The record gives the reactivity of an RNA of 177 nucleotides to 2A3. The reactions ran in a buffer of 150 mM KOAc, 10 mM MgCl2 and 150 mM bicine (pH 8.5), at 24 C. The data come from the RNA Mapping Database (RMDB), library RFM100.
RNA sequence: GGGAACGACUCGAGUAGAGUCGAAAAACGUACCUCUACGGAGGUACGAAAAUAAUGAUGACUAACUCCAAUACUGACCAAUGAUGUCGUAACCCGAAACUGAAUACGCUCCAUUACGAUGGAGCGAGCUGGCGAGCUAGUUCGCUAGCUCGCCAGCAAAAGAAACAACAACAACAAC
Reactivity to 2A3 in 0.01 (KOAc 150mM, MgCl2 10mM, bicine 150mM(pH8.5), 24C), signal-to-noise 3, nucleotides 027 to 126: a010c000g000u000a000c000c010u000c010u020a170c230g050g000a000g000g000u000a000c000g000a000a000a000a000u160a030a100u120g150a000u110g020a040c030u000a190a000c010u070c030c010a150a130u060a170c040u090g100a100c040c050a010a180u060g030a050u200g080u000c000g020u040a190a230c000c010c010g070a070a010a010c200u200g020a060a000u040a100c000g000c000u050c000c000a020u020u030a130c270g100a000u020g000g000a010g000c000g000a000
Notes:
As a SHAPE reagent, 2A3 marks flexible, mostly unpaired nucleotides at the ribose 2'-OH. For 2A3 the reverse transcriptase was SuperScript II with manganese.